Chemical mapping of a 207-nucleotide RNA with 2A3 and DMS.
[RMDB]
RNA sequence: GGGAACGACUCGAGUAGAGUCGAAAACUAGAGUACAAAAGUAAGGGCCUUCCUUACUAACUGCAGGGUCUCUCUAUUACACCUCAACAUACACACUUUGCUGCUACUGUUUGUACUGUCUACAGUAGAAUUUCCUUAUCUUGCUCCUGGUAGUGCAAAGAAUGUAGGAAUUCGUUCCUACAUUCUUAAAAGAAACAACAACAACAAC
Reactivity to 2A3 in 0.01 (KOAc 150mM, MgCl2 10mM, bicine 150mM(pH8.5), 24C), signal-to-noise 9, nucleotides 027 to 156: c030u040a020g010a000g090u120a080c040a060a140a060a010g010u020a020a000g020g020g060c040c100u160u130c060c000u010u050a010c000u020a060a050c030u070g030c050a040g030g000g040u010c030u000c000u000c020u090a070u120u150a070c050a070c030c030u090c050a070a070c030a090u170a050c030a010c010a020c090u060u100u090g030c030u040g040c010u020a010c000u020g070u120u160u060g060u100a110c060u080g100u120c030u040a020c010a010g020u020a010g040a030a020u040u050u040c010c000u090u120a120u190c050u060u090g030c010u050c050c030u030g080g020u100a070g010u070g050c020a000
Reactivity to DMS in 0.01 (KOAc 150mM, MgCl2 10mM, bicine 150mM(pH8.5), 24C), signal-to-noise 4, nucleotides 027 to 156: c060u000a090g010a120g020u010a130c010a060a070a190a100g010u000a030a040g020g000g010c170c130u000u010c010c010u000u010a040c020u000a040a070c070u000g020c020a100g020g030g010u000c010u010c020u000c030u010a090u000u010a080c060a060c020c020u010c030a060a070c050a120u000a070c050a070c060a060c060u000u000u000g020c020u000g010c020u000a070c050u010g010u000u000u000g030u000a070c080u000g020u000c020u000a060c030a040g000u010a040g000a060a110u000u000u000c030c020u000u000a120u000c030u000u000g020c020u000c020c040u000g010g030u000a040g020u000g000c050a100
Conditions: 150 mM KOAc, 10 mM MgCl2 and 150 mM bicine (pH 8.5), 24 C. The DMS profile rests on 12,747 reads. DMS adducts were read by reverse transcription with MarathonRT.